[RMDB]
RNA sequence: GGGAACGACUCGAGUAGAGUCGAAAAGCCUGUGUCAGCGUCUUUAGCGGCAAUACAGUGGAGCCGCGUUACAACGUCGAGGAAUCCAUCUCCCUCAACGUCGAAGUGUAGUCGCUUCAUGCGCUCCUGUAGGUUGCGUGUUCGCACGCAACCUACAAAAAGAAACAACAACAACAAC
Reactivity to 2A3 in 0.01 (KOAc 150mM, MgCl2 10mM, bicine 150mM(pH8.5), 24C), signal-to-noise 2, nucleotides 027 to 126: g050c000c000u010g030u010g040u050c030a020g010c020g030u050c030u050u080u070a000g000c000g000g000c020a030a110u210a120c150a070g100u060g130g040a050g000c000c000g000c050g020u130u030a010c050a060a000c020g000u010c020g010a000g000g100a030a020u010c020c050a150u030c050u090c080c000c010u000c050a080a020c010g000u050c030g110a260a010g020u020g020u190a050g090u070c020g000c000u010u000c030a000u070g010c040g000c000u060c000c010
Reactivity to DMS in 0.01 (KOAc 150mM, MgCl2 10mM, bicine 150mM(pH8.5), 24C), signal-to-noise 1, nucleotides 027 to 126: g010c000c050u000g040u030g000u010c020a030g000c030g020u000c030u000u020u060a070g000c000g050g000c000a140a070u060a090c190a060g030u020g000g080a080g110c010c050g030c010g000u000u000a120c270a110a030c000g000u000c070g080a000g000g000a180a040u070c000c120a020u010c040u000c110c000c020u000c020a040a000c000g050u000c100g000a000a050g070u000g030u090a080g000u010c030g030c000u000u000c030a100u000g000c050g010c070u010c010c040
Structure probing data (2A3 and DMS) for a 177-nucleotide construct.
The data come from the RNA Mapping Database (RMDB), library OK1LIB.
The RNA was probed in 150 mM KOAc, 10 mM MgCl2 and 150 mM bicine (pH 8.5) at 24 C.